[RMDB]
RNA sequence: GGGAACGACUCGAGUAGAGUCGAAAAGAUAUGGACCAGGUGGCUUGCAUCGAUCUUUAUCGGAAACGAUAAAGGGAGCAAACCACUGGUCCUAAGUCAAACUCUACCGUGGUUCGCCACGGUAGAGGCUUCUAAUAGACUUCGGUCUAUUAGAAGCAAAAGAAACAACAACAACAAC
Reactivity to 2A3 in 0.01 (KOAc 150mM, MgCl2 10mM, bicine 150mM(pH8.5), 24C), signal-to-noise 5, nucleotides 027 to 126: g030a020u070a020u150g000g000a010c010c020a060g220g300u080g010g080c060u030u070g010c020a250u300c150g090a040u010c020u020u000u000a000u010c000g030g020a110a050a050c010g000a000u000a000a000a000g000g000g000a030g000c020a040a070a030c000c010a010c000u000g010g000u000c000c000u000a030a000g000u000c030a050a070a140c010u000c000u000a000c000c000g000u000g000g060u070u100c290g050c070c010a010c000g010g000u010a000g000a000g000
Reactivity to DMS in 0.01 (KOAc 150mM, MgCl2 10mM, bicine 150mM(pH8.5), 24C), signal-to-noise 4, nucleotides 027 to 126: g000a040u000a300u010g020g010a010c000c010a030g010g020u000g020g000c030u000u000g000c000a300u010c230g010a050u030c000u010u000u000a000u000c000g000g000a130a070a210c000g010a010u000a000a010a010g000g000g000a020g010c000a010a010a010c010c000a030c000u000g000g010u000c000c000u000a010a080g000u000c030a120a120a300c020u000c000u000a000c010c000g050u000g000g000u000u020c220g010c000c000a000c010g000g000u000a000g000a000g010